[RMDB]
RNA sequence: GGGAACGACUCGAGUAGAGUCGAAAAGUGCAGCUUCGGCUGCACAAAAAGAUAUGGAGAAUCUCCCCACCUAACCUGUGGCGAAGAACUCGGAAACGAGGGAGCCAUAAAGGUUAGAGGAUUCUCCUAAGUCAAAAAACCCUGAUUCGUCAGGGAAUGAGUCAAGAUUAUUCGUAAUCUUGACUCAAAAAGAAACAACAACAACAAC
Reactivity to DMS in 0.01 (KOAc 150mM, MgCl2 10mM, bicine 150mM(pH8.5), 24C), signal-to-noise 1, nucleotides 027 to 156: g000u000g040c010a040g040c020u000u010c300g080g000c030u010g070c000a000c030a020a040a030a060a060g000a100u000a140u010g030g000a040g040a050a060u000c050u010c270c030c000c010a300c110c020u000a030a060c010c010u010g040u000g000g000c000g000a150a180g000a070a210c000u020c000g000g000a130a130a250c010g010a010g020g000g000a300g000c000c000a030u000a010a090a070g020g050u000u000a010g000a290g030g000a030u000u000c010u000c010c000u000a000a040g000u010c070a000a180a210a080a050a080c000c030c030u010g030a060u010u000c210g030u000c010a010g010g040g010a000a040
Reactivity to 2A3 in 0.01 (KOAc 150mM, MgCl2 10mM, bicine 150mM(pH8.5), 24C), signal-to-noise 2, nucleotides 027 to 156: g000u000g000c000a020g000c020u050u110c200g160g000c010u030g010c000a000c000a000a010a000a000a000g110a080u160a060u100g010g000a000g010a000a000u000c000u060c030c000c010c020a020c010c000u000a010a000c000c000u000g000u020g040g000c020g110a220a000g030a080a020c000u000c020g010g000a100a060a030c000g000a010g000g010g010a000g040c010c000a050u080a010a140a020g000g000u000u000a000g000a010g010g000a000u000u020c010u030c000c000u000a030a010g040u060c030a020a010a030a300a030a070c000c030c030u030g010a030u010u120c190g040u020c060a000g000g000g000a020a050
Structure probing data (DMS and 2A3) for a 207-nucleotide construct. DMS adducts were read by reverse transcription with MarathonRT. For 2A3 the reverse transcriptase was SuperScript II with manganese. Conditions: 150 mM KOAc, 10 mM MgCl2 and 150 mM bicine (pH 8.5), 24 C. Reactivities are given for positions 27 through 156.